[RMDB]
Chemical mapping of a 177-nucleotide RNA with DMS and 2A3. For DMS, 1,285 sequencing reads were counted. Source: RMDB library OK2TRN, as collected in RNAgym. Conditions: 150 mM KOAc, 10 mM MgCl2 and 150 mM bicine (pH 8.5), 24 C.
RNA sequence: GGGAACGACUCGAGUAGAGUCGAAAAGUGACGAACGAUAUACCUUGCGGUUCAAGGAUUUACGCACCGGAGAACAGUACCCGGACGAGAUCGCCGGGAUCGGAGCGGGAGUCACCUGGGCAGCUGAACGUUUUACAUGCUUCGGCAUGUAAAACGUAAAAGAAACAACAACAACAAC
Reactivity to DMS in 0.01 (KOAc 150mM, MgCl2 10mM, bicine 150mM(pH8.5), 24C), signal-to-noise 2, nucleotides 027 to 126: g000u000g010a120c130g000a180a040c030g030a120u000a080u010a110c100c030u000u000g020c130g000g010u010u010c010a050a090g010g000a100u000u000u000a080c080g020c090a090c020c000g000g020a200g000a030a120c110a050g000u010a110c020c000c010g010g000a080c000g020a200g010a070u000c120g000c020c020g000g020g040a070u010c070g000g010a060g020c000g000g030g010a120g010u010c010a100c070c020u000g000g000g000c070a050g000c060u000g020a090
Reactivity to 2A3 in 0.01 (KOAc 150mM, MgCl2 10mM, bicine 150mM(pH8.5), 24C), signal-to-noise 1, nucleotides 027 to 126: g020u020g020a040c080g050a060a020c040g030a050u020a020u030a260c000c000u010u080g040c000g070g060u000u020c010a030a050g050g020a030u020u070u050a080c010g020c040a060c020c010g000g020a160g050a140a050c050a120g070u070a150c010c000c030g020g000a040c050g080a060g050a110u150c030g030c040c010g000g000g000a020u070c060g040g010a020g000c000g000g040g000a020g010u030c020a100c140c000u070g000g020g020c000a020g010c030u080g010a040